Chemical mapping of a 177-nucleotide RNA with DMS and 2A3. DMS adducts were read by reverse transcription with MarathonRT. High 2A3 reactivity points to a flexible backbone, as in loops and unpaired stretches. Conditions: 150 mM KOAc, 10 mM MgCl2 and 150 mM bicine (pH 8.5), 24 C. The 2A3 profile rests on 1,789 reads.

RNA sequence: GGGAACGACUCGAGUAGAGUCGAAAAGAUAUGGAUGGCGAGAGAAUACUCGCAUUCGGAAACGAAUGACCCGAGUUGGAAUGCCAUCCUAAGUCAAAACAAUGUCACACUUCGGUGUGACAUUGAACAAAUCCUUUUCCUUCGGGAAAAGGAUUUGAAAAGAAACAACAACAACAAC
Reactivity to DMS in 0.01 (KOAc 150mM, MgCl2 10mM, bicine 150mM(pH8.5), 24C), signal-to-noise 3, nucleotides 027 to 126: g010a040u010a220u000g000g010a000u010g000g010c000g030a140g000a200g010a200a090u000a000c000u010c000g020c000a000u000u010c000g010g010a060a060a150c000g000a020a000u010g010a140c270c210c090g000a010g020u010u010g000g020a160a220u010g000c010c000a000u000c000c000u000a010a060g000u030c030a080a110a100a210c010a000a000u000g000u030c000a000c000a010c010u000u020c240g030g010u000g000u010g000a030c000a000u000u000g000a090a160
Reactivity to 2A3 in 0.01 (KOAc 150mM, MgCl2 10mM, bicine 150mM(pH8.5), 24C), signal-to-noise 1, nucleotides 027 to 126: g020a040u050a020u090g020g000a020u000g030g010c060g030a090g000a010g030a300a150u140a230c000u010c000g000c000a000u000u010c010g010g020a090a010a000c000g010a010a000u030g070a160c050c080c100g000a000g020u100u200g150g050a270a100u140g000c010c000a000u000c000c000u000a030a000g030u020c010a030a000a000a120c010a000a000u010g000u000c000a000c010a000c030u040u140c300g150g000u000g010u030g000a040c000a000u000u020g000a000a000
Background:
The data come from the RNA Mapping Database (RMDB), library TTRDEL.